[RMDB]
RNA sequence: GGGAACGACUCGAGUAGAGUCGAAAAGAUAUGGACGUUUCCUUCCUUGGAUUUACCACUACCCAAAUGUAUGUCGGAAACGACAUACAUUUGAACAGUGGUUGUCAGGAAGGGACGUCCUAAGUCACCCCUUGUAGUAGUUCGCUACUACAAGGGGAAAAGAAACAACAACAACAAC
Reactivity to DMS in 0.01 (KOAc 150mM, MgCl2 10mM, bicine 150mM(pH8.5), 24C), signal-to-noise 1, nucleotides 027 to 126: g010a040u000a300u000g010g010a000c000g010u010u000u010c000c000u000u000c000c020u000u030g070g010a040u000u000u000a010c000c000a000c000u010a150c260c150c010a000a030a000u010g000u000a010u000g000u000c000g010g000a130a120a300c000g000a000c000a010u000a000c010a020u000u010u000g020a030a270c190a030g000u010g060g040u010u000g000u010c010a030g010g010a000a010g000g030g010a010c000g010u000c000c010u000a030a050g000u000c010a300
Reactivity to 2A3 in 0.01 (KOAc 150mM, MgCl2 10mM, bicine 150mM(pH8.5), 24C), signal-to-noise 2, nucleotides 027 to 126: g030a030u100a080u250g010g010a050c040g020u060u220u300c030c000u030u040c020c000u040u300g300g030a070u300u110u300a020c000c010a020c000u050a040c000c040c000a000a000a010u030g010u000a000u010g010u000c010g000g050a120a030a110c000g010a010c000a000u000a010c000a010u020u000u000g000a050a040c100a010g010u000g020g010u000u000g030u000c000a000g000g000a000a000g020g030g010a000c000g000u000c000c000u010a000a010g030u020c030a130